[RMDB]
RNA sequence: GGGAACGACUCGAGUAGAGUCGAAAAAUGAGAUCCCAUCUUGCACACUGUGCUAAUGUGAGAUUCUCAUGCCUCCUACUUGGAGAGAUCUGGACUAGAAGUCAGGGCAUCUGACUCUGCCAGCCACAAAACGUACAAGGCUUCGGCCUUGUACGAACUGGUAGAAAGGGUUCGCCCUUUCUACCAGAAAAGAAACAACAACAACAAC
Reactivity to DMS in 0.01 (KOAc 150mM, MgCl2 10mM, bicine 150mM(pH8.5), 24C), signal-to-noise 1, nucleotides 027 to 156: a030u000g000a000g020a050u010c000c000c010a060u010c240u000u030g030c020a000c010a230c180u000g000u010g030c030u000a050a030u020g000u000g020a020g010a070u000u000c000u000c000a030u030g030c070c040u000c010c020u000a060c180u000u000g030g000a150g040a100g000a140u010c000u020g000g010a080c070u010a060g040a140a080g000u000c010a050g000g000g030c200a140u010c020u000g020a070c000u000c010u000g030c040c000a020g010c040c000a100c130a040a080a050a160c000g000u000a000c000a010a050g020g030c030u010u000c300g050g000c000c000u000u010g000u000a000c020g000a010a030
Reactivity to 2A3 in 0.01 (KOAc 150mM, MgCl2 10mM, bicine 150mM(pH8.5), 24C), signal-to-noise 5, nucleotides 027 to 156: a000u020g000a000g000a010u000c040c000c000a010u060c180u050u050g020c010a020c050a060c170u300g010u010g000c040u050a010a050u020g110u080g040a170g020a100u290u040c000u000c000a000u100g020c000c010u020c000c010u100a230c090u130u240g050g000a050g000a030g030a130u050c000u010g000g030a080c060u140a120g020a160a000g100u010c000a000g040g040g150c100a110u160c130u010g010a010c000u000c000u000g000c000c010a020g030c020c010a110c020a050a120a080a030c010g000u000a000c000a000a000g000g000c000u030u130c210g050g000c000c000u000u000g000u010a000c000g000a000a000
The record gives the reactivity of an RNA of 207 nucleotides to DMS and 2A3. The 2A3 profile rests on 2,727 reads. For 2A3 the reverse transcriptase was SuperScript II with manganese. The RNA was probed in 150 mM KOAc, 10 mM MgCl2 and 150 mM bicine (pH 8.5) at 24 C.